Annotation: Chemical mapping of a 207-nucleotide RNA with 2A3 and DMS. Values are in units of 0.01, from 0 to 300, in steps of 10. 2A3 adducts were read by reverse transcription with SuperScript II with manganese. For DMS the reverse transcriptase was MarathonRT.
RNA sequence: GGGAACGACUCGAGUAGAGUCGAAAAUAUGGGGAACUACAUCUGUGUCGCGAGUUCGAUUCUCGCCAGGGCCUGGUCCUGUAGCUCAGUUGGUAGAGCAAGCUGUUCCCCGGACACUUGUCGUCAUAAAAGUUGCCCCCGUUCGCGGGGGCAACAACAUACCUACAUCCUUCGGGAUGUAGGUAUGAAAAGAAACAACAACAACAAC
Reactivity to 2A3 in 0.01 (KOAc 150mM, MgCl2 10mM, bicine 150mM(pH8.5), 24C), signal-to-noise 2, nucleotides 027 to 156: u240a080u060g010g000g000g010a020a000c020u060a020c080a100u060c050u050g070u020g040u100c020g010c000g010a010g000u010u000c000g000a000u010u020c000u000c000g010c010c000a010g030g000g040c060c230u210g090g020u010c000c000u010g000u000a010g000c010u000c030a060g010u140u110g120g160u160a000g000a000g010c000a000a000g020c030u010g010u010u000c000c000c000c000g000g000a000c030a010c020u080u160g040u110c040g010u030c040a050u140a200a070a030a070g000u010u000g010c050c000c010c040c010g000u020u010c120g000c020g050g010g000g000g000c000a000a000c000a000a000
Reactivity to DMS in 0.01 (KOAc 150mM, MgCl2 10mM, bicine 150mM(pH8.5), 24C), signal-to-noise 3, nucleotides 027 to 156: u010a100u010g010g010g050g010a040a070c010u010a070c050a080u000c060u000g030u000g050u000c050g010c000g000a030g020u000u010c040g010a300u010u000c000u000c000g000c030c020a060g010g020g000c020c140u000g110g010u000c010c020u000g000u000a070g010c000u000c030a140g010u000u000g020g030u000a090g000a070g020c000a190a120g010c040u000g000u010u000c000c000c000c030g000g000a030c030a090c200u000u000g000u000c010g010u000c020a080u000a060a060a070a140g020u000u000g010c000c000c000c000c000g010u000u000c200g010c030g050g020g040g050g000c020a000a000c000a030a120